The record gives the reactivity of an RNA of 177 nucleotides to 2A3 and DMS. The data come from the RNA Mapping Database (RMDB), libraries RFM100 and RFMREP. Conditions: 150 mM KOAc, 10 mM MgCl2 and 150 mM bicine (pH 8.5), 24 C.
[RMDB]
RNA sequence: GGGAACGACUCGAGUAGAGUCGAAAAUAUGGAUAGAAGUUUCUUCGAGAGGAGGGAUGGACCGUAUAGUAUCGCGGAUCCUGGUAAAAGUAGCAGAAUAGAAUGGUGAAAAUCCAUUCCGCCGAAAAUUUACUACGUGAUUCGUCACGUAGUAAAUAAAAGAAACAACAACAACAAC
Reactivity to 2A3 in 0.01 (KOAc 150mM, MgCl2 10mM, bicine 150mM(pH8.5), 24C), signal-to-noise 5, nucleotides 027 to 126: u250a040u040g060g030a010u070a180g090a170a030g020u040u010u000c020u030u050c010g030a020g020a060g170g000a050g010g030g010a020u040g010g030a010c000c010g050u030a040u020a060g130u040a060u150c060g020c020g010g030a140u060c000c000u030g020g030u170a100a110a100a060g040u090a020g040c050a020g030a070a030u070a050g040a020a020u030g010g000u020g000a040a000a010a060u010c000c000a010u000u000c000c010g020c030c020g040a110a080a000
Reactivity to DMS in 0.01 (KOAc 150mM, MgCl2 10mM, bicine 150mM(pH8.5), 24C), signal-to-noise 8, nucleotides 027 to 126: u020a050u010g000g000a110u010a090g000a110a220g010u010u000u010c010u010u010c070g010a160g020a190g000g000a050g000g010g000a020u000g010g000a060c020c010g020u000a060u020a120g010u010a070u020c090g010c020g000g000a070u000c020c020u000g010g010u030a070a070a100a100g010u010a080g010c070a090g000a070a100u010a070g000a030a030u010g010g000u010g000a080a050a090a080u010c000c000a010u000u000c010c070g010c030c030g010a050a040a080